[RMDB]
RNA sequence: GGGAACGACUCGAGUAGAGUCGAAAACGUACCGCUGCAGCUGGUGAAUACCACCGAGCCGGUGGUAUUCAUCUCCUUAAACGGCGGCCAAAUGGUGCCCGUGCUGCUCGACACCGGAUCCACCGGUGCUCUAGCGCAGAUUCGUCUGCGCUAGAGCAAAAGAAACAACAACAACAAC
Reactivity to DMS in 0.01 (KOAc 150mM, MgCl2 10mM, bicine 150mM(pH8.5), 24C), signal-to-noise 2, nucleotides 027 to 126: c120g000u000a130c010c010g020c060u000g000c060a010g020c050u010g000g010u010g020a000a000u000a000c000c000a000c010c040g020a180g040c210c210g030g030u000g010g020u000a000u000u000c000a000u000c020u000c090c070u000u020a070a070a130c020g010g010c030g010g010c090c040a150a050a080u010g010g020u010g010c060c010c000g040u030g010c080u000g010c070u010c050g010a130c040a010c010c010g000g000a240u020c180c150a140c010c010g000g010u000
Reactivity to 2A3 in 0.01 (KOAc 150mM, MgCl2 10mM, bicine 150mM(pH8.5), 24C), signal-to-noise 2, nucleotides 027 to 126: c040g010u050a050c030c000g060c090u060g000c040a020g000c020u040g000g000u010g000a000a000u000a000c000c000a010c020c010g080a130g250c020c150g050g000u000g010g020u000a000u020u000c010a010u000c010u000c010c000u120u160a150a080a030c070g020g010c020g010g050c020c010a280a300a160u250g050g000u080g100c030c000c010g010u040g040c010u040g000c020u010c030g100a060c010a040c040c000g000g030a060u100c040c020a070c010c050g020g010u030